[RMDB]
RNA sequence: GGGAACGACUCGAGUAGAGUCGAAAAAAUAGGUGAAGUGCACAUCGACGAGUCGGAUCUGCGCAUCGAUGUCUACCGGUCUUCAGGCAAAGGCGGCCAAGGCGUUAAUACAACCGAUUCCGCGGUGAAUCAGUGACUGCUUCGGCAGUCACUGAUUAAAAGAAACAACAACAACAAC
Reactivity to DMS in 0.01 (KOAc 150mM, MgCl2 10mM, bicine 150mM(pH8.5), 24C), signal-to-noise 2, nucleotides 027 to 126: a000a060u040a050g000g010u130g000a000a070g040u000g000c090a110c010a030u030c000g020a020c140g000a170g020u010c020g000g020a080u010c070u030g020c020g020c080a050u000c030g000a000u010g000u020c000u000a070c040c050g030g000u050c000u000u030c190a080g000g000c060a010a080a250g010g010c070g060g000c090c040a080a160g000g000c040g020u040u000a110a070u050a040c280a090a160c000c000g000a060u000u040c090c050g000c020g000g000u000g000
Reactivity to 2A3 in 0.01 (KOAc 150mM, MgCl2 10mM, bicine 150mM(pH8.5), 24C), signal-to-noise 2, nucleotides 027 to 126: a000a010u300a110g000g040u170g050a160a040g050u160g140c020a000c000a080u020c010g080a060c040g010a090g120u070c010g000g030a060u030c040u070g030c020g000c050a130u140c080g000a000u050g000u000c000u040a020c000c000g050g020u010c000u060u020c060a090g000g120c130a150a050a000g090g000c000g000g000c000c070a000a030g190g010c000g000u020u100a060a010u080a080c020a110a040c030c020g060a130u000u040c050c010g020c050g000g110u030g010